Record summary:
The record gives the reactivity of an RNA of 177 nucleotides to DMS and 2A3. 2A3 adducts were read by reverse transcription with SuperScript II with manganese. The RNA was probed in 150 mM KOAc, 10 mM MgCl2 and 150 mM bicine (pH 8.5) at 24 C.
[RMDB]
RNA sequence: GGGAACGACUCGAGUAGAGUCGAAAAAGAACCGCAUUAGCAGGUUCACCAGCGUGGUCUUGCCGGCUCCCGUCGGUCCGACGAUCGCCACCGUGCUACCCGGUUCGGCCACCAGCGACAGGUCGCGGCCGUCGGUAAGGUUCGCCUUACCGACGGCAAAAGAAACAACAACAACAAC
Reactivity to DMS in 0.01 (KOAc 150mM, MgCl2 10mM, bicine 150mM(pH8.5), 24C), signal-to-noise 1, nucleotides 027 to 126: a070g010a020a000c000c000g020c100a220u010u000a140g000c000a070g050g070u000u000c080a170c040c090a140g000c180g000u000g010g010u000c000u000u000g060c080c010g000g000c100u000c110c090c010g020u000c030g010g020u000c130c070g010a050c070g010a020u020c110g000c050c080a060c080c040g000u000g000c070u000a070c300c110c090g010g000u000u000c110g000g000c060c020a070c010c060a070g000c010g040a120c120a080g000g020u000c020g000c130g010
Reactivity to 2A3 in 0.01 (KOAc 150mM, MgCl2 10mM, bicine 150mM(pH8.5), 24C), signal-to-noise 1, nucleotides 027 to 126: a010g000a000a000c000c000g080c030a070u160u170a070g040c200a070g000g000u000u000c030a040c010c010a040g030c030g050u040g050g020u030c010u050u050g090c020c030g080g000c020u050c050c070c010g000u090c020g000g170u090c090c050g050a010c010g010a090u030c040g030c050c010a100c020c060g050u150g040c000u040a030c000c000c030g040g000u040u000c000g040g000c020c020a040c000c030a080g030c030g050a010c030a080g200g000u050c030g040c070g060